[RMDB]
RNA sequence: GGGAACGACUCGAGUAGAGUCGAAAAUAGCGUCGAGGUGGACGCGGCGGGUCGCGAUAUCGCGAACCCUAAUGCAGGAAGUGGCCCUUCGUACCCGUGACAAGGCGGAGGUCUUGUAAAUGGAUCGCUUGAGAUUUGGUUUCGACCAAAUCUCAAGAAAAGAAACAACAACAACAAC
Reactivity to 2A3 in 0.01 (KOAc 150mM, MgCl2 10mM, bicine 150mM(pH8.5), 24C), signal-to-noise 1, nucleotides 027 to 126: u080a010g020c000g030u020c030g040a120g100g070u150g100g020a020c010g000c010g020g000c050g020g000g010u030c020g020c070g100a200u120a060u300c040g000c020g010a220a210c000c000c000u070a100a050u100g010c040a020g030g120a150a010g040u160g060g000c040c000c000u010u020c030g010u010a100c000c000c020g000u000g030a020c010a060a010g020g060c030g030g020a110g070g000u000c040u010u060g030u020a060a130a120u140g040g020a060u060c040g000
Reactivity to DMS in 0.01 (KOAc 150mM, MgCl2 10mM, bicine 150mM(pH8.5), 24C), signal-to-noise 2, nucleotides 027 to 126: u020a110g000c010g010u000c010g030a130g010g030u000g020g020a060c030g040c010g010g010c300g000g000g000u000c000g000c010g030a290u010a110u000c030g000c010g000a030a070c020c000c010u000a030a090u020g020c100a080g000g020a110a100g000u000g010g010c030c040c020u010u000c030g020u000a110c050c110c010g000u010g010a040c050a000a050g020g000c020g030g030a130g010g020u000c000u000u000g010u000a010a080a100u000g000g010a150u000c050g000